RNA sequence: GGGAACGACUCGAGUAGAGUCGAAAAGAAAGAAAGAAAGUCUUUUUACCAUCAGCGAGGUAUAGAGUUCCUACGUUCCUAUAUUCAGUCGUAGGAACUUAAUACCGUGCUCUUGGAGGACUGUCAAAAAUACGGUCUUAUUCGUAAGACCGUAUUUAAAAGAAACAACAACAACAAC
Reactivity to 2A3 in 0.01 (KOAc 150mM, MgCl2 10mM, bicine 150mM(pH8.5), 24C), signal-to-noise 9, nucleotides 027 to 126: g100a010a040a000g120a040a080a010g090a070a070a010g010u010c020u040u210u060u130u140a140c010c000a010u010c000a000g010c010g070a060g010g010u010a000u070a090g050a000g020u000u000c000c000u000a000c000g070u160u170c040c040u150a130u040a110u300u250c100a020g070u060c010g000u000a000g000g000a000a000c000u000u000a000a000u000a000c000c000g030u050g000c000u000c000u010u010g010g010a010g010g010a000c010u020g090u100c050a100a100
Reactivity to DMS in 0.01 (KOAc 150mM, MgCl2 10mM, bicine 150mM(pH8.5), 24C), signal-to-noise 9, nucleotides 027 to 126: g010a110a110a110g010a100a100a110g000a070a060a020g000u000c000u000u020u030u030u030a170c000c000a010u000c250a010g010c010g010a070g000g010u000a010u000a300g010a010g010u000u000c000c000u000a010c010g010u030u010c120c080u010a120u030a120u040u030c270a110g010u010c000g000u000a000g000g000a000a000c000u000u000a050a020u000a000c000c010g010u010g000c000u000c130u000u000g010g010a080g000g000a010c000u000g000u020c070a030a080